This 170-nucleotide RNA was probed chemically with DMS and 2A3. The reactions ran in a buffer of 150 mM KOAc, 10 mM MgCl2 and 150 mM bicine (pH 8.5), at 24 C. Values cover nucleotides 27 to 129.

[RMDB]
RNA sequence: GGGAACGACUCGAGUAGAGUCGAAAAUGGUGCUCCAGAUGAUGCCUCUCGGUUACUUCAUACCGUGCUUGCAAAGGCUGAGUUAUGCUGUUCUGCACGCAUGGUUUGGAGAGAGUGGUGCAAUGUCGAACGAAGAGGUUCGCCUCUUCGAAAAGAAACAACAACAACAAC
Reactivity to DMS in 0.01 (KOAc 150mM, MgCl2 10mM, bicine 150mM(pH8.5), 24C), signal-to-noise 9, nucleotides 027 to 129: u060g030g030u010g000c070u000c020c010a100g020a100u020g010a090u010g030c000c000u020c000u020c040g020g000u020u020a120c010u050u000c000a020u030a010c000c010g040u000g010c020u010u000g000c000a030a060a230g000g050c000u030g040a230g060u050u060a090u080g020c010u010g000u050u020c130u000g000c000a030c050g020c000a010u000g000g000u050u020u010g000g010a000g000a010g000a040g010u040g010g020u010g000c060a050a060u040g010u010c050g030a070a100
Reactivity to 2A3 in 0.01 (KOAc 150mM, MgCl2 10mM, bicine 150mM(pH8.5), 24C), signal-to-noise 9, nucleotides 027 to 129: u150g060g000u120g030c030u030c040c010a020g020a120u150g030a060u080g030c010c000u020c000u000c000g070g020u110u200a070c000u000u000c000a000u010a020c000c000g010u000g000c010u010u020g000c000a020a060a070g020g000c000u050g060a130g220u240u170a110u300g010c000u030g130u190u060c060u040g000c000a000c030g000c000a000u010g020g000u030u020u000g010g000a020g010a010g000a000g000u060g010g030u060g010c030a040a090u120g060u110c050g030a080a060